RNA sequence: GGGAACGACUCGAGUAGAGUCGAAAAAGGUCAUUUUCAUGACCGCGCAUCUCCAGUCAGGGCAGGCCGUUCCCAUACGGUCUUGCCCUUUUUUCUGAAAAGAUCCUUUCAGUUCGCUGAAAGGAUCCUUAGCUACCUGCUUCGGCAGGUAGCUAAGAAAAGAAACAACAACAACAAC
Reactivity to DMS in 0.01 (KOAc 150mM, MgCl2 10mM, bicine 150mM(pH8.5), 24C), signal-to-noise 1, nucleotides 027 to 126: a070g010g010u000c000a020u000u000u020u050c200a030u000g000a000c000c010g030c170g000c170a130u000c020u030c010c130a070g010u020c260a010g000g020g000c010a010g000g000c010c000g010u000u000c130c090c120a120u040a050c000g010g020u000c000u000u020g010c010c000c010u000u000u000u000u000u020c030u030g000a090a110a060a070g000a000u000c000c000u040u000u000c000a020g010u000u020c230g040c000u000g000a000a000a000g020g000a000u010c000

Conditions: 150 mM KOAc, 10 mM MgCl2 and 150 mM bicine (pH 8.5), 24 C. This 177-nucleotide RNA was probed chemically with DMS.